An RNA of 177 nucleotides, treated with 2A3 and DMS and read out base by base. Source: RMDB library OK2TRN, as collected in RNAgym. Conditions: 150 mM KOAc, 10 mM MgCl2 and 150 mM bicine (pH 8.5), 24 C. For 2A3, 2,253 sequencing reads were counted.

RNA sequence: GGGAACGACUCGAGUAGAGUCGAAAACAGUUUACGGUCUGGGUGAGCGCUUUACUGCCCUGGUGCGCAAUGGCCAGACGGUAGAGACCUGGAACCGGGACGGCGGCACAAGUACUGAACAGGCGUAAUAGAAUAGUUCGUUCGCGAACUAUUCUAUAAAAGAAACAACAACAACAAC
Reactivity to 2A3 in 0.01 (KOAc 150mM, MgCl2 10mM, bicine 150mM(pH8.5), 24C), signal-to-noise 2, nucleotides 027 to 126: c020a060g030u050u080u120a060c050g020g040u000c000u000g030g090g050u110g090a120g070c100g010c070u080u040u090a030c020u060g030c070c030c030u040g020g050u200g060c050g000c040a130a270u230g040g000c010c000a000g000a010c010g000g000u010a010g000a010g020a040c000c010u010g060g000a030a090c020c010g030g000g020a030c010g000g040c040g040g000c020a030c040a140a040g050u090a070c040u080g060a080a010c020a050g030g000c040g030u050a000
Reactivity to DMS in 0.01 (KOAc 150mM, MgCl2 10mM, bicine 150mM(pH8.5), 24C), signal-to-noise 3, nucleotides 027 to 126: c080a170g000u000u000u000a060c030g000g000u000c010u000g010g000g020u000g020a220g030c150g010c010u010u000u000a030c060u000g020c100c050c050u000g010g020u000g010c060g010c130a100a090u010g000g010c000c000a000g010a110c000g000g010u000a020g010a040g000a100c030c020u010g000g020a060a040c040c020g020g000g000a050c050g010g000c060g000g000c050a030c070a040a080g010u010a090c070u010g000a070a070c100a070g020g000c060g010u000a080